RNA sequence: GGGAACGACUCGAGUAGAGUCGAAAAGUAGUGGACAUCUUCAAGGUUUUAAAACAACACUAAGAAGUAAACAGCCAUUAUAGUGCAAACUCUGCCAAAGUGUCAUAUGCAUACUGAGUCUAUAACUGCGUCUGCAGUGAUCAUGCUAUUCAUUUGGUCUAGUGUUUGUAUUCGUACAAACACUAGAAAAAGAAACAACAACAACAAC
Reactivity to DMS in 0.01 (KOAc 150mM, MgCl2 10mM, bicine 150mM(pH8.5), 24C), signal-to-noise 5, nucleotides 027 to 156: g020u000a050g050u000g000g000a120c070a150u010c020u000u010c010a080a300g010g000u000u000u010u020a050a110a150a160c110a070a060c090a050c030u000a030a300g010a070a070g010u000a110a060a070c040a100g000c030c020a060u000u000a080u000a110g010u010g000c070a080a050a040c050u000c040u000g020c040c030a040a060a120g000u000g010u000c040a060u000a090u010g010c040a090u020a090c040u010g010a060g000u000c020u000a130u010a040a070c000u000g010c040g010u000c130u000g030c000a050g000u000g020a040u010c050a110u000g020c010u000a100u000u010c040a150u000u000u000g020g010
Reactivity to 2A3 in 0.01 (KOAc 150mM, MgCl2 10mM, bicine 150mM(pH8.5), 24C), signal-to-noise 9, nucleotides 027 to 156: g030u040a000g010u020g020g010a030c010a110u020c010u010u000c020a080a080g020g030u000u030u060u160a110a120a040a040c080a030a020c040a020c100u080a080a040g010a010a000g010u090a030a130a070c040a020g020c000c010a010u050u040a040u040a040g150u120g020c020a050a050a100c050u050c040u080g020c010c020a070a100a010g080u040g020u060c030a030u090a060u220g010c010a010u020a100c050u100g030a030g070u010c050u080a110u080a160a080c020u040g020c030g130u130c180u220g000c010a010g000u000g020a040u070c030a020u050g020c020u070a080u070u070c050a090u040u020u110g060g000